Structure probing data (DMS) for a 177-nucleotide construct. For DMS the reverse transcriptase was MarathonRT. Source: RMDB library TTRINS, as collected in RNAgym. The RNA was probed in 150 mM KOAc, 10 mM MgCl2 and 150 mM bicine (pH 8.5) at 24 C.
RNA sequence: GGGAACGACUCGAGUAGAGUCGAAAAGAUAUGGAACUAUCACUUGUGUUACUAUAGGGAGUCCGUCAGUCGGAAACGACUGUCGGACGACGAUCUAUAGUAACACAAGUGAGUAGUUCCUAAGUCACCUUUCAUGUACGUUCGCGUACAUGAAAGGAAAAGAAACAACAACAACAAC
Reactivity to DMS in 0.01 (KOAc 150mM, MgCl2 10mM, bicine 150mM(pH8.5), 24C), signal-to-noise 1, nucleotides 027 to 126: g030a110u000a300u010g000g000a040a090c000u000a030u000c000a000c000u000u010g010u020g000u000u000a030c000u000a000u000a000g000g000g000a030g020u000c000c000g020u000c000a020g000u000c000g000g000a150a120a240c000g010a000c020u000g010u000c000g020g010a010c020g000a020c150g000a010u010c000u000a000u000a000g020u000a000a010c000a010c010a000a010g000u000g000a010g020u000a000g000u000u020c000c000u010a020a060g000u000c050a260